[RMDB]
RNA sequence: GGGAACGACUCGAGUAGAGUCGAAAAACCUUAUUUUGAGAAGCUGAGGGAUUUGGCCCAUAGAAGCUCCAGCAACCGACUUUAAAUAGCACGGUGCUAAUACCAACGAGCAACUCGAAUGAUAAGUAAAACGUUGACAAGUUCGCUUGUCAACGAAGUUUCUAAUGUCCUUCGGGACAUUAGAAACAAAAGAAACAACAACAACAAC
Reactivity to 2A3 in 0.01 (KOAc 150mM, MgCl2 10mM, bicine 150mM(pH8.5), 24C), signal-to-noise 2, nucleotides 027 to 156: a020c110c000u230u140a180u010u040u040u040g060a060g000a060a010g000c140u100g000a080g010g000g030a030u030u070u220g040g010c010c000c010a050u110a180g120a070a000g020c040u040c000c040a000g010c000a040a000c000c000g030a000c000u140u110u100a120a160a300u180a120g000c000a000c060g040g000u000g010c000u000a040a050u020a100c010c010a030a020c090g030a010g000c000a040a020c060u010c020g090a100a060u110g080a050u110a180a000g060u090a100a090a010a030c000g000u000u000g000a000c000a000a000g000u000u140c110g010c120u000u000g000u000c000a000a000c000g000a020a000